[RMDB]
RNA sequence: GGGAACGACUCGAGUAGAGUCGAAAAGGGGUCAUCCCAUCGAUCGCUGAAGAGCAACAGCGUACUGAAGCCUCCACGGUACGACAUGCUCUAAAGCGGGAGGGAUGACGGAGGCACCCAAAACUCAGAGAUGUACGUUCGCGUACAUCUCUGAGAAUCCAAAAUAUUAGUUCGCUAAUAUUUUGGAAAAAGAAACAACAACAACAAC
Reactivity to DMS in 0.01 (KOAc 150mM, MgCl2 10mM, bicine 150mM(pH8.5), 24C), signal-to-noise 1, nucleotides 027 to 156: g020g000g000g010u000c020a050u000c000c010c010a300u000c040g000a050u010c050g000c000u010g000a300a070g000a040g050c000a080a130c040a140g000c020g000u080a010c030u000g000a040a150g010c010c010u000c010c070a300c040g020g000u010a000c000g000a010c040a270u000g040c000u000c000u020a040a260a040g010c000g010g000g030a070g020g050g000a040u010g010a010c010g050g000a030g030g000c010a150c010c000c000a070a080a120a180c010u000c000a010g010a000g000a020u000g050u000a000c020g030u000u000c270g000c020g080u000a020c000a010u000c000u000c010u010g010a000g000a030a090
Reactivity to 2A3 in 0.01 (KOAc 150mM, MgCl2 10mM, bicine 150mM(pH8.5), 24C), signal-to-noise 5, nucleotides 027 to 156: g050g010g040g020u010c000a000u000c000c010c010a080u300c030g010a020u010c000g000c020u050g020a110a040g000a070g010c060a040a110c060a150g030c010g000u010a010c000u040g040a180a030g010c000c000u020c000c010a010c000g000g010u000a000c000g110a060c050a160u300g000c000u010c000u010a030a030a000g000c000g000g000g000a030g000g000g000a000u000g000a000c000g010g010a000g000g000c000a060c000c000c000a030a100a050a100c000u000c000a000g000a000g000a000u000g000u000a000c010g020u040u110c250g000c000g140u000a000c000a000u000c000u000c010u000g000a000g000a000a010